[RMDB]
RNA sequence: GGGAACGACUCGAGUAGAGUCGAAAAGAUAUGGAUCUGAUGGACAUGAAUUGGUACCAUCGGAAACGAUGGGAUUAUUCAACAGCCCGCUCAGAUCCUAAGUCAAAGGUUACGUUCGCGUAACCAAGAGUUCUGUUAGGUUCGCCUAACAGAACUCAAAAGAAACAACAACAACAAC
Reactivity to 2A3 in 0.01 (KOAc 150mM, MgCl2 10mM, bicine 150mM(pH8.5), 24C), signal-to-noise 1, nucleotides 027 to 126: g040a010u080a030u100g000g000a010u000c000u010g020a040u300g040g000a020c010a110u100g010a000a020u080u190g020g010u080a040c030c000a000u010c000g030g000a030a050a000c000g030a000u010g000g000g070a020u080u030a000u040u020c020a050a090c000a160g030c040c000c000g000c050u040c000a000g000a010u040c000c010u030a080a020g010u020c060a140a040a080g000g000u000u000a010c010g000u000u070c300g000c000g170u020a010a020c060c010a000a010
Reactivity to DMS in 0.01 (KOAc 150mM, MgCl2 10mM, bicine 150mM(pH8.5), 24C), signal-to-noise 2, nucleotides 027 to 126: g000a070u000a300u000g000g010a000u000c020u000g000a020u000g000g000a000c060a300u000g000a030a010u010u010g060g000u000a150c000c000a000u000c000g000g010a100a040a210c000g000a010u000g010g030g020a060u030u020a000u000u000c030a000a040c230a170g000c010c030c000g010c210u010c000a000g000a030u000c000c000u000a010a160g000u000c070a140a110a120g000g000u000u000a010c000g010u000u040c210g020c040g010u000a000a000c000c010a050a080